Chemical mapping of a 177-nucleotide RNA with DMS and 2A3. 2A3 is a SHAPE reagent: it acylates the 2'-hydroxyl of flexible nucleotides of all four kinds. The reactions ran in a buffer of 150 mM KOAc, 10 mM MgCl2 and 150 mM bicine (pH 8.5), at 24 C. For 2A3, 1,974 sequencing reads were counted. It was measured as part of the RMDB library OK2TST. The DMS profile rests on 2,154 reads. For DMS the reverse transcriptase was MarathonRT.
RNA sequence: GGGAACGACUCGAGUAGAGUCGAAAAACGGGUCAUCAGCAUCUGUUUGCCAAUGUGCACCACCUCGAUCAACUUGGUCGGGUUAGAGUCGAGAUCGACCAUAUUGCCCGCCUCUUUCGCCGCCUGGACUGAAUUGCUGUUUCGACAGCAAUUCAGUAAAAGAAACAACAACAACAAC
Reactivity to DMS in 0.01 (KOAc 150mM, MgCl2 10mM, bicine 150mM(pH8.5), 24C), signal-to-noise 2, nucleotides 027 to 126: a090c060g000g000g010u010c040a120u000c140a150g000c060a010u000c050u010g010u000u000u000g010c030c030a100a070u010g000u000g000c050a130c100c040a060c110c000u010c040g020a080u000c060a050a140c150u020u010g010g030u000c030g010g000g000u010u000a080g010a070g010u000c010g010a160g010a130u010c050g010a040c060c030a100u020a060u000u010g010c040c010c010g010c060c010u000c110u000u000u000c040g010c010c040g020c020c030u010g010g010
Reactivity to 2A3 in 0.01 (KOAc 150mM, MgCl2 10mM, bicine 150mM(pH8.5), 24C), signal-to-noise 2, nucleotides 027 to 126: a010c030g010g020g010u030c050a140u020c060a130g060c030a030u000c030u070g070u050u060u070g000c000c000a090a190u160g070u100g050c040a030c000c000a030c000c010u030c020g050a100u030c020a030a140c080u090u180g050g010u080c030g010g000g050u000u050a040g020a040g050u020c010g020a030g050a240u090c010g040a030c040c020a040u070a080u100u090g000c000c000c000g000c020c020u050c000u040u050u070c080g040c020c000g070c030c000u040g030g010